[RMDB]
RNA sequence: GGGAACGACUCGAGUAGAGUCGAAAACAUAAUAGCGGCGAUACGCUAUCGCGCGAUAAUAGCGCGCCGCGCGUAUCGCGCGCGCUAUGCGUAUUAUCGCAUAUAUGCGUAUCGCGCGAUAAUAGCGGUACACCUCACAGUUCGCUGUGAGGUGUACAAAAGAAACAACAACAACAAC
Reactivity to DMS in 0.01 (KOAc 150mM, MgCl2 10mM, bicine 150mM(pH8.5), 24C), signal-to-noise 3, nucleotides 027 to 126: c040a070u010a110a110u000a090g010c020g020g020c020g000a010u000a030c000g000c000u010a030u010c200g040c110g020c000g000a020u000a020a020u010a070g030c010g030c010g050c270c080g000c020g020c030g010u000a090u010c130g000c040g010c020g010c100g020c050u010a030u010g020c020g010u000a030u000u000a020u000c020g020c030a070u000a020u000a010u020g020c010g000u000a020u000c000g010c000g000c000g010a030u010a050a070u000a100g040c130g020
Reactivity to 2A3 in 0.01 (KOAc 150mM, MgCl2 10mM, bicine 150mM(pH8.5), 24C), signal-to-noise 4, nucleotides 027 to 126: c060a020u270a180a080u090a250g080c070g140g000c000g020a010u010a010c010g010c040u030a020u070c080g010c010g000c010g050a010u030a040a010u050a040g180c000g000c000g000c030c030g000c000g000c020g020u060a090u300c160g000c000g000c000g000c030g000c040u150a090u300g010c040g030u010a030u050u020a020u040c030g000c020a000u030a000u010a000u160g010c000g000u000a000u020c010g000c010g000c010g020a010u020a160a110u060a080g130c150g030